[RMDB]
This 177-nucleotide RNA was probed chemically with DMS.
The DMS profile rests on 1,962 reads.
Conditions: 150 mM KOAc, 10 mM MgCl2 and 150 mM bicine (pH 8.5), 24 C.

RNA sequence: GGGAACGACUCGAGUAGAGUCGAAAAGAUAUGGACGGUAGAACUACUGAACGUUCAUGACAGAGAGGUAGAUCGGAAACGAUCUACUACCCACCUCUGCAUGAACGUUCAGCUACCGUCCUAAGUCCAUAAGCCGCAUGUUCGCAUGCGGCUUAUGAAAAGAAACAACAACAACAAC
Reactivity to DMS in 0.01 (KOAc 150mM, MgCl2 10mM, bicine 150mM(pH8.5), 24C), signal-to-noise 3, nucleotides 027 to 126: g010a080u000a290u010g010g020a010c000g010g030u000a030g000a070a030c110u010a300c010u000g000a000a010c000g000u000u000c000a000u010g010a220c010a010g010a000g000a100g020g000u010a010g020a000u000c000g020g020a140a120a230c000g010a000u000c000u000a010c000u000a070c060c060c160a300c100c000u000c000u010g000c000a020u000g020a020a010c000g010u000u000c040a000g000c030u000a000c000c010g030u000c000c000u000a000a110g000u000c030